This 177-nucleotide RNA was probed chemically with 2A3 and DMS.
Reactivities are given for positions 27 through 126.
For DMS the reverse transcriptase was MarathonRT.
The data come from the RNA Mapping Database (RMDB), library OK2TRN.

[RMDB]
RNA sequence: GGGAACGACUCGAGUAGAGUCGAAAAGGUCAUCUGCGCGACGCAGAUGCUGGAGAGCAUGACGUACAACCCCCGCCCGACGCGCGCUGAGGUAUCGGAUGUCGCCAACGCUGUCUUCAACGGCGCGGCUAGGCGAAGGAUUCGUCCUUCGCCUAGCAAAAGAAACAACAACAACAAC
Reactivity to 2A3 in 0.01 (KOAc 150mM, MgCl2 10mM, bicine 150mM(pH8.5), 24C), signal-to-noise 1, nucleotides 027 to 126: g040g020u140c000a020u030c020u060g030c100g010c070g260a100c200g000c020a010g000a050u000g030c010u010g050g050a140g020a010g080c040a050u110g080a100c060g000u110a020c030a080a220c000c000c000c000c000g030c000c010c000g040a060c040g000c010g000c000g020c010u020g000a020g050g000u060a040u140c020g000g010a090u090g040u070c060g000c080c000a030a020c050g000c000u070g010u030c000u070u030c010a050a010c040g060g000c020g010c030g030
Reactivity to DMS in 0.01 (KOAc 150mM, MgCl2 10mM, bicine 150mM(pH8.5), 24C), signal-to-noise 2, nucleotides 027 to 126: g000g040u020c000a010u000c000u000g000c020g010c190g040a120c150g040c010a020g000a010u000g000c050u010g010g000a080g000a100g020c060a060u000g010a050c060g000u010a050c100a100a220c020c020c010c020c050g020c010c020c030g040a120c100g000c030g010c060g000c040u000g000a070g000g040u020a120u000c050g010g000a090u000g000u010c070g000c030c080a090a120c060g000c050u020g000u000c030u010u010c100a040a090c050g010g010c000g030c020g000